The data come from the RNA Mapping Database (RMDB), library OK1LIB. This 177-nucleotide RNA was probed chemically with DMS and 2A3. For DMS, 3,169 sequencing reads were counted. High DMS reactivity at an A or C suggests that its Watson-Crick edge is free.
RNA sequence: GGGAACGACUCGAGUAGAGUCGAAAAAUCAACUGCACCUGCUAAUACGAUUAACCAUACUGGUUGACCGGUCAUAGAAGCUGCGGUAAUUAGUCCAGUUAAUCCUGCACCAGCUGCUAACAUUGCGACUGCUGGAUUAGUUCGCUAAUCCAGCAGUAAAAGAAACAACAACAACAAC
Reactivity to DMS in 0.01 (KOAc 150mM, MgCl2 10mM, bicine 150mM(pH8.5), 24C), signal-to-noise 3, nucleotides 027 to 126: a080u010c110a080a060c000u000g000c030a020c110c050u000g020c010u010a030a070u020a210c040g020a060u000u000a030a030c060c000a210u020a100c230u020g000g000u000u000g000a070c010c000g000g020u020c240a030u000a050g030a200a050g010c200u000g010c010g020g000u010a110a030u000u010a170g000u070c030c040a010g000u030u000a040a120u010c020c000u000g000c040a080c040c010a110g010c000u000g000c030u000a070a110c110a070u000u000g030c060g020
Reactivity to 2A3 in 0.01 (KOAc 150mM, MgCl2 10mM, bicine 150mM(pH8.5), 24C), signal-to-noise 5, nucleotides 027 to 126: a020u050c010a020a030c010u050g000c000a020c040c020u020g090c040u030a100a020u070a150c040g030a030u040u000a010a050c010c010a060u080a230c150u140g000g000u040u020g020a020c010c000g050g040u080c080a080u030a070g050a090a010g020c050u070g030c020g030g030u040a050a080u060u090a030g040u010c030c010a010g010u000u030a070a040u050c020c020u040g010c010a020c020c040a050g020c010u050g010c000u070a110a050c020a160u140u260g000c040g030